[RMDB]
An RNA of 177 nucleotides, treated with DMS and 2A3 and read out base by base.
The RNA was probed in 150 mM KOAc, 10 mM MgCl2 and 150 mM bicine (pH 8.5) at 24 C.
RNA sequence: GGGAACGACUCGAGUAGAGUCGAAAAUGUUUGCAAUUCGUUGCAAACAAACUACCGAGAACGUUGCUCGGUAUAAACAGCGUACCCUUGGAAACAAGGGAACUAUGGAACGCUUCGGCGUUCCAAACCAAAUUAAGAGAUUCGUCUCUUAAUUUGGAAAAGAAACAACAACAACAAC
Reactivity to DMS in 0.01 (KOAc 150mM, MgCl2 10mM, bicine 150mM(pH8.5), 24C), signal-to-noise 5, nucleotides 027 to 126: u000g000u000u000u000g010c000a010a040u000u020c160g020u000u010g000c010a010a000a000c000a030a090a130c110u000a250c000c010g010a020g010a140a080c100g010u010u000g010c000u000c000g020g000u000a030u000a030a070a110c070a030g010c040g000u000a300c000c000c010u000u000g010g000a180a100a180c000a000a010g000g000g010a040a020c110u000a130u000g000g000a010a000c000g010c000u000u010c170g020g010c000g010u000u010c000c000a010a040a100
Reactivity to 2A3 in 0.01 (KOAc 150mM, MgCl2 10mM, bicine 150mM(pH8.5), 24C), signal-to-noise 4, nucleotides 027 to 126: u030g000u000u010u010g010c010a020a020u050u050c180g070u060u020g000c000a000a010a000c010a000a060a020c030u050a040c000c010g000a000g010a040a030c040g030u040u070g010c000u000c010g010g030u070a030u070a020a040a000c010a010g030c010g040u070a120c000c000c000u000u000g020g010a070a040a030c000a010a010g000g000g020a010a000c010u040a080u070g010g000a010a000c000g000c000u020u050c210g080g000c000g000u010u010c000c010a000a000a010